[RMDB]
RNA sequence: GGGAACGACUCGAGUAGAGUCGAAAAGAGACGUUGUUCGCAACGUCUCGCAAUAUGGGGCGCUCGCGCGCCGCACUGAGAUCGUCGGGAUCCAGACCGACAACACCCAAGAAUUCGUUCUUGGGAAGGCUUUUCGAUAAUUCGUUAUCGAAAAGCCAAAAGAAACAACAACAACAAC
Reactivity to 2A3 in 0.01 (KOAc 150mM, MgCl2 10mM, bicine 150mM(pH8.5), 24C), signal-to-noise 1, nucleotides 027 to 126: g010a000g000a000c000g000u000u010g000u050u060c110g080c060a000a000c000g000u010c000u000c000g000c030a050a070u160a080u130g160g000g000g040c000g050c070u090c100g100c050g030c030g050c040c000g170c030a090c100u290g090a180g040a200u240c080g010u020c040g000g020g020a020u050c000c010a050g060a030c000c000g010a000c000a000a020c060a010c000c000c000a010a020g030a000a010u060u010c090g040u050u020c020u000u010g000g020g000a000a030
Reactivity to DMS in 0.01 (KOAc 150mM, MgCl2 10mM, bicine 150mM(pH8.5), 24C), signal-to-noise 1, nucleotides 027 to 126: g000a000g020a020c030g030u010u000g000u000u010c300g050c000a010a010c010g030u010c000u000c000g000c240a070a190u000a070u000g010g000g000g020c000g000c000u000c300g010c300g000c030g000c000c000g020c050a070c170u010g000a130g000a090u000c110g010u000c090g000g000g000a070u000c030c050a100g000a080c000c000g000a010c000a130a110c300a180c000c000c000a000a000g000a020a050u000u000c250g000u000u000c000u010u000g000g010g000a000a060
The data come from the RNA Mapping Database (RMDB), library M2PK50. Chemical mapping of a 177-nucleotide RNA with 2A3 and DMS. High 2A3 reactivity points to a flexible backbone, as in loops and unpaired stretches.